An RNA of 177 nucleotides, treated with 2A3 and read out base by base. Reactivities are rounded to 0.1 and cut off at 0 and 3. It was measured as part of the RMDB library RFM100.

RNA sequence: GGGAACGACUCGAGUAGAGUCGAAAAGUGACAGUGUUGAUCACAAGUCAUUGCCAGCUCUGUUCAUUUUCUUCCCUGGUCUAACUCAAUAAUUGCCAUCAUGAAAAUUCUGGGUGACUUUUGUGACGUGGAAGUGGACAUUCGUGUCCACUUCCACAAAAGAAACAACAACAACAAC
Reactivity to 2A3 in 0.01 (KOAc 150mM, MgCl2 10mM, bicine 150mM(pH8.5), 24C), signal-to-noise 1, nucleotides 027 to 126: g000u040g010a000c050a000g030u000g060u140u140g010a080u040c000a000c020a120a000g000u000c040a290u000u140g080c020c000a000g020c050u000c020u050g110u060u010c000a050u120u040u040u000c010u050u000c050c030c000u000g100g000u000c040u190a080a000c000u010c020a080a000u050a120a210u070u030g030c060c000a030u060c020a000u040g100a030a020a020a020u090u070c050u080g060g000g000u020g000a030c000u090u030u040u000g020u000g060a010c170